[RMDB]
The record gives the reactivity of an RNA of 207 nucleotides to 2A3 and DMS. Reactivities are given for positions 27 through 156. The data come from the RNA Mapping Database (RMDB), library OK3TST. The DMS profile rests on 7,250 reads.
RNA sequence: GGGAACGACUCGAGUAGAGUCGAAAAUGUACAUGUAUAGCUAGGUGUCUUGAUUUGUCUCUUAUGGAAGAGAACAAUUUAAGGACUGAAUUACACGACACCAUUUCAUCUCCUUGUGGUCAACGAAGAAGCUGUAAAUUAUACUGAAGACCAAGAAUACCUGACUAUAUUUCGAUAUAGUCAGGUAAAAAGAAACAACAACAACAAC
Reactivity to 2A3 in 0.01 (KOAc 150mM, MgCl2 10mM, bicine 150mM(pH8.5), 24C), signal-to-noise 5, nucleotides 027 to 156: u100g010u030a030c020a060u060g050u070a070u030a060g080c070u030a040g010g040u030g020u080c020u020u040g040a050u050u010u040g010u000c010u000c000u100u040a120u300g230g110a140a030g020a020g030a080a040c010a030a030u060u060u090a020a010g010g000a010c030u030g040a050a020u110u040a050c050a000c080g020a000c000a010c020c010a030u020u050u050c020a050u000c030u010c010c030u040u070g040u040g060g020u020c020a030a030c100g050a060a090g030a030a010g010c020u020g020u080a020a110a050u180u100a090u060a080c040u040g060a040a010g010a040c010c000a000a010g040a040a040
Reactivity to DMS in 0.01 (KOAc 150mM, MgCl2 10mM, bicine 150mM(pH8.5), 24C), signal-to-noise 3, nucleotides 027 to 156: u000g010u000a050c040a080u010g020u000a050u000a050g040c120u010a230g000g020u000g020u000c000u010u000g010a030u000u000u000g010u000c020u010c030u000u000a210u010g040g020a100a080g000a080g030a090a070c040a010a040u000u000u000a050a020g000g000a090c030u030g010a140a150u000u000a090c090a040c030g020a050c030a080c100c000a060u000u010u010c050a050u000c030u000c020c040u020u010g020u010g010g030u000c030a080a130c080g000a120a120g000a070a110g020c050u010g010u000a030a080a100u010u000a100u010a090c050u000g000a080a080g000a070c030c010a060a110g010a130a300